[RMDB]
RNA sequence: GGGAACGACUCGAGUAGAGUCGAAAAAGGUCGACGCCUCGCCGGAGCAACUCCAAGACGAGUUCCGUACUGCUCUCGAGACGACUGCCGACGCUGCCCUCGGGACCGUCGAGGAGCGCGCCGAUCAGGAGGUGACAACUGAGAUUCGUGAGGGACGCUAUGGGUACUUCUUCGGAAGUACCCAUAGAAAAGAAACAACAACAACAAC
Reactivity to DMS in 0.01 (KOAc 150mM, MgCl2 10mM, bicine 150mM(pH8.5), 24C), signal-to-noise 1, nucleotides 027 to 156: a220g010g060u000c000g010a100c030g010c010c000u000c050g010c010c050g000g010a030g010c000a070a040c010u010c030c050a060a300g000a050c030g000a170g030u010u000c000c010g030u000a080c030u030g010c020u000c020u000c010g020a220g020a050c050g040a120c200u000g100c050c030g020a100c060g020c030u010g050c050c010c020u010c030g020g010g020a040c010c030g100u020c030g030a300g000g000a050g060c030g020c040g020c010c010g010a080u000c060a100g020g010a120g000g020u020g000a070c000a030a150c070u030g010a040g010a210u000u000c050g000u010g000a110g010g020g010a100c020g000
Reactivity to 2A3 in 0.01 (KOAc 150mM, MgCl2 10mM, bicine 150mM(pH8.5), 24C), signal-to-noise 2, nucleotides 027 to 156: a010g040g020u050c010g060a090c030g030c000c000u010c020g080c020c000g030g010a030g000c040a030a190c030u000c000c010a030a010g000a000c010g000a070g160u010u000c000c000g000u030a050c020u060g000c010u020c000u010c110g120a120g060a210c140g100a140c100u180g050c040c020g010a030c090g000c040u050g010c030c000c080u030c010g010g000g000a020c000c000g000u020c000g000a040g000g000a010g000c030g010c000g000c010c000g050a090u090c060a070g130g000a030g030g000u020g030a060c050a080a040c050u050g020a010g030a170u090u170c080g040u060g040a080g020g020g000a000c030g000